[RMDB]
RNA sequence: GGGAACGACUCGAGUAGAGUCGAAAACUACUCACCGUUCGCGGUGAGUAGAAAGGGGUGGUGGCUCAGAAGGGAGAGCAGCGGCCUUCAGAGCCGCGAGACGGGGGUUCGAUUCCCCUCCGCUCCACCAAAACCGUCUGGGGUUCGCCCCAGACGGCUUAUGAUACAUCUUCGGAUGUAUCAUAAGAAAAGAAACAACAACAACAAC
Reactivity to 2A3 in 0.01 (KOAc 150mM, MgCl2 10mM, bicine 150mM(pH8.5), 24C), signal-to-noise 2, nucleotides 027 to 156: c000u010a000c000u000c000a000c000c000g040u090u090c250g020c010g100g000u020g000a000g000u000a020g000a040a030a010g000g040g000g000u050g010g000u060g040g030c010u020c030a070g040a120a060g070g070g030a130g030a020g060c070a020g040c040g050g070c000c020u110u120c060a070g010a020g030c020c000g030c000g020a070g010a030c050g000g000g000g000g000u030u050c020g030a050u050u070c010c000c000c010u000c000c000g000c000u050c000c010a040c020c040a030a060a020a040c000c000g000u000c000u000g010g000g000g030u030u090c170g100c000c040c050c000a000g000a000c000g010g000
An RNA of 207 nucleotides, treated with 2A3 and read out base by base. The RNA was probed in 150 mM KOAc, 10 mM MgCl2 and 150 mM bicine (pH 8.5) at 24 C. It was measured as part of the RMDB library PDB130.